[RMDB]
Structure probing data (2A3) for a 207-nucleotide construct.
The 2A3 profile rests on 717 reads.
RNA sequence: GGGAACGACUCGAGUAGAGUCGAAAACGGAGUUUCUUGUUGUAGCAGCCACGUUAUUGGACCUCAAAGCUGCUCGACUGCUUCCACGGGGUGAAGUGGAUGAUCUGUCUGAUCUGGAGCUUUUAGAGUCGCGCGAUCUUUUGUUUGCUAGGUUGCACUCCAUUAAAUAUUUCGAUAUUUAAUGGAGAAAAGAAACAACAACAACAAC
Reactivity to 2A3 in 0.01 (KOAc 150mM, MgCl2 10mM, bicine 150mM(pH8.5), 24C), signal-to-noise 2, nucleotides 027 to 156: c030g050g030a080g040u050u090u020c020u090u010g020u030u120g020u100a020g030c000a000g000c000c000a060c020g000u050u130a150u100u200g130g030a040c000c010u020c010a000a000a020g000c000u130g050c000u030c020g010a010c010u020g010c010u020u000c000c000a030c010g100g010g000g130u120g110a230a050g040u000g000g040a020u010g010a080u070c030u050g050u000c070u070g030a080u120c070u140g090g040a010g000c000u030u090u010u050a050g030a040g050u000c030g000c020g000c020g300a090u060c090u140u210u130u240g130u110u120u090g070c030u050a050g000g040u000u000g000c010a020
It was measured as part of the RMDB library OK3TST. The RNA was probed in 150 mM KOAc, 10 mM MgCl2 and 150 mM bicine (pH 8.5) at 24 C.